[RMDB]
RNA sequence: GGGAACGACUCGAGUAGAGUCGAAAAACACUUUCAGCUUCAGAGACGUGUAGGGACCAAAGGGGAAUCUUUGAGCCUGCCACUGACUAUACCACCACUAACAUCUAGGAUACAGCGAGUAGAACUCUGGACUUGGAAAAGGUGCUCUCUCGGACCAGGCAUUUACCAUAUUCGUAUGGUAAAUGCCAAAAGAAACAACAACAACAAC
Reactivity to 2A3 in 0.01 (KOAc 150mM, MgCl2 10mM, bicine 150mM(pH8.5), 24C), signal-to-noise 2, nucleotides 027 to 156: a000c060a020c030u060u070u080c060a030g010c020u100u040c050a050g030a060g040a090c020g050u110g000u070a020g020g030g070a080c020c010a040a020a010g060g020g040g060a050a150u080c040u020u010u030g030a030g030c010c000u030g020c030c010a020c040u030g020a030c020u040a050u090a160c020c050a010c020c000a060c050u060a060a050c000a060u060c050u120a030g030g010a040u070a130c030a010g010c060g030a010g030u090a050g070a110a030c030u010c030u040g010g020a010c010u020u040g010g020a040a040a050a020g060g000u050g000c020u000c000u000c000u000c070g160g020a080c020c040a020